This 207-nucleotide RNA was probed chemically with 2A3 and DMS.
Conditions: 150 mM KOAc, 10 mM MgCl2 and 150 mM bicine (pH 8.5), 24 C.
Values cover nucleotides 27 to 156.
For 2A3, 6,363 sequencing reads were counted.
RNA sequence: GGGAACGACUCGAGUAGAGUCGAAAAUGGAAGGCCGUGGGCCCGAGAGAAGUCGCUCUCUCUCGCCCUUUACAUCCUCUCAGGCAUAGAGAUGACCAUUUGCCUAGGGUGAGUCUUUAAGUAGACACAGCCUAUCUAUGGCGAUGUAUAGGGGCACGAUAGAUACGUGGUUCGCCACGUAUCUAUCAAAAGAAACAACAACAACAAC
Reactivity to 2A3 in 0.01 (KOAc 150mM, MgCl2 10mM, bicine 150mM(pH8.5), 24C), signal-to-noise 7, nucleotides 027 to 156: u140g040g040a090a040g030g020c070c070g210u130g070g110g010c030c020c030g000a010g000a000g000a190a050g050u110c030g010c020u020c000u010c000u000c010u030c040g030c000c000c000u000u000u000a000c000a000u000c000c000u000c000u050c170a010g000g020c010a010u070a030g080a010g040a100u130g070a080c050c120a240u100u060u040g000c000c000u010a010g010g000g000u000g020a010g000u000c010u030u210u070a300a300g300u130a060g040a000c020a000c010a010g000c000c010u050a090u160c040u040a050u110g010g010c000g000a000u000g010u000a040u080a080g020g010g000g000c030a010c100
Reactivity to DMS in 0.01 (KOAc 150mM, MgCl2 10mM, bicine 150mM(pH8.5), 24C), signal-to-noise 2, nucleotides 027 to 156: u000g020g030a100a040g010g050c030c020g060u030g060g040g000c010c030c000g010a090g010a110g010a060a170g000u000c090g010c050u000c030u000c000u000c040u000c000g030c010c000c000u000u000u000a060c020a070u000c010c000u000c030u020c110a010g000g030c010a090u000a100g030a060g020a090u000g000a050c020c080a300u000u000u000g000c000c030u010a100g020g030g030u000g000a300g010u000c010u000u000u000a100a220g010u000a020g010a030c010a060c030a130g030c000c000u000a170u030c170u010a120u010g020g020c000g050a020u010g020u000a070u000a050g020g040g030g040c010a090c110